This 177-nucleotide RNA was probed chemically with 2A3. The reactions ran in a buffer of 150 mM KOAc, 10 mM MgCl2 and 150 mM bicine (pH 8.5), at 24 C. The 2A3 profile rests on 854 reads. It was measured as part of the RMDB library RFM100.
RNA sequence: GGGAACGACUCGAGUAGAGUCGAAAACUUCAAAAUGCGGCUUUGACUGUGAUUCAUGGCAAAAAAGCUGGAAUAACCCUGCCAAGUCUUAGAAGCUUUAAGAUUCAUCGCAUUGAACUUGAUACGUCACUUCCGUGUUGUUCGCAACACGGAAGUGAAAAGAAACAACAACAACAAC
Reactivity to 2A3 in 0.01 (KOAc 150mM, MgCl2 10mM, bicine 150mM(pH8.5), 24C), signal-to-noise 1, nucleotides 027 to 126: c050u090u060c010a040a040a000a000u080g030c070g020g020c040u000u010u040g070a070c010u010g040u000g050a000u110u000c010a050u040g060g010c000a030a040a040a040a030a040g020c020u010g030g030a000a020u020a080a080c020c000c020u020g020c070c000a050a000g000u010c000u030u090a070g030a190a060g020c000u080u080u020a060a000g050a070u000u070c030a040u030c030g010c110a010u000u000g050a030a020c010u020u120g020a140u100a070c140g030u060